[RMDB]
RNA sequence: GGGAACGACUCGAGUAGAGUCGAAAAUUAACCUUGGUUCCGGCCUUGGCCAAGGUUCCUUAAUUGGUUCCAAUUCCUUCCAAGGAACCUUAAGGCCAAUUCCUUAAGGCCUUGGAAUUCCGGCCGGUGCUACCCUUAUAUUCGUAUAAGGGUAGCAAAAAGAAACAACAACAACAAC
Reactivity to DMS in 0.01 (KOAc 150mM, MgCl2 10mM, bicine 150mM(pH8.5), 24C), signal-to-noise 4, nucleotides 027 to 126: u010u000a060a050c000c000u000u000g000g000u000u000c010c000g000g000c000c010u000u010g010g010c010c010a010a020g010g000u000u000c050c030u000u010a100a120u020u010g010g010u010u000c090c080a140a280u000u000c060c090u010u000c020c020a010a050g000g000a070a060c010c000u000u010a000a000g000g020c300c190a100a130u020u010c020c000u000u000a010a010g000g000c010c030u000u010g000g010a040a070u010u010c110c100g000g010c010c010g000g010
Reactivity to 2A3 in 0.01 (KOAc 150mM, MgCl2 10mM, bicine 150mM(pH8.5), 24C), signal-to-noise 1, nucleotides 027 to 126: u050u020a030a020c000c000u000u000g000g000u070u000c020c000g000g030c050c040u110u180g040g000c050c010a000a000g000g050u030u050c000c000u070u060a130a100u300u080g010g000u060u030c020c010a010a040u130u080c010c000u040u020c000c010a000a000g120g030a290a260c080c010u000u000a000a000g010g000c000c020a030a150u200u090c000c000u000u010a000a050g020g000c000c000u020u000g010g020a020a020u090u020c070c010g020g000c050c020g000g000